RNA sequence: GGGAACGACUCGAGUAGAGUCGAAAAGUGUGACCUAAUCCACUGGGGGGAUCAUGCCAGUUAAACAGAAGAUUCAGCAGCUAAACACCAGCAGCCUACCGCCGGGAACGUCGAUCGCUUUCCGGGACUGGCUGGUGAGGCUGAACGGAGUCACGAACACAUGAGUAGCUUUCGAGCUACUCAUGUGAAAAGAAACAACAACAACAAC
Reactivity to 2A3 in 0.01 (KOAc 150mM, MgCl2 10mM, bicine 150mM(pH8.5), 24C), signal-to-noise 1, nucleotides 027 to 156: g040u030g030u040g100a020c080c130u110a080a040u040c040c050a030c140u110g000g000g000g000g000g000a070u090c020a000u010g110c030c000a030g090u090u250a150a030a010c070a060g190a230a020g010a060u040u030c000a010g030c000a000g040c050u090a050a000a110c030a000c000c010a000g000c000a000g050c000c000u100a140c010c070g120c000c000g010g020g000a010a000c000g090u150c070g050a160u160c010g080c150u000u000u000c000c000g000g020g050a040c000u030g170g060c000u000g000g000u000g000a010g030g080c000u000g000a020a020c000g090g000a000g000u000c000a000c180g030a000a010